[RMDB]
RNA sequence: GGGAACGACUCGAGUAGAGUCGAAAAAACUGUUGAGGUGGGAACCGCUACCCCACGCACUUGGCCGCAAAGCCAAGUAAUUAACCGCCGUAAGGCGGCCAAGAGAUCGCGGUUGGCAACGCGCGACAUUAGCUAUCGGCGUUCGCGCCGAUAGCAAUCUAUACUCCUUCUUCGGAAGGAGUAUAGAAAAAGAAACAACAACAACAAC
Reactivity to DMS in 0.01 (KOAc 150mM, MgCl2 10mM, bicine 150mM(pH8.5), 24C), signal-to-noise 1, nucleotides 027 to 156: a080a000c050u020g000u000u020g000a140g000g040u010g030g010g010a080a050c050c050g000c030u000a160c110c000c000c020a020c030g030c050a020c010u000u000g010g020c000c020g000c290a090a170a060g010c010c000a020a020g010u000a030a040u010u000a210a080c000c020g020c000c000g000u010a100a280g040g040c010g000g050c000c070a050a140g010a090g010a050u020c000g020c000g010g010u000u000g000g030c010a100a060c040g000c030g010c040g010a160c030a070u010u000a080g000c020u000a000u010c000g000g050c000g020u000u010c240g030c010g010c030c040g020a010u000a000g040c020a000a000
Reactivity to 2A3 in 0.01 (KOAc 150mM, MgCl2 10mM, bicine 150mM(pH8.5), 24C), signal-to-noise 1, nucleotides 027 to 156: a010a000c090u050g000u000u010g000a010g020g000u000g010g010g000a230a210c100c000g050c000u100a170c000c000c000c000a000c000g000c010a000c000u000u000g010g000c010c020g140c250a040a020a010g000c000c000a000a000g010u000a000a010u010u000a000a010c020c000g030c040c030g060u150a070a150g000g000c000g000g020c000c000a000a000g000a010g000a010u000c000g000c000g010g020u020u010g000g050c010a040a000c020g000c000g000c000g030a000c010a070u090u180a040g000c000u000a000u030c010g000g020c010g050u050u110c270g030c010g000c080c000g000a000u000a000g020c000a000a000

Conditions: 150 mM KOAc, 10 mM MgCl2 and 150 mM bicine (pH 8.5), 24 C. An RNA of 207 nucleotides, treated with DMS and 2A3 and read out base by base. It was measured as part of the RMDB library M2RFPK.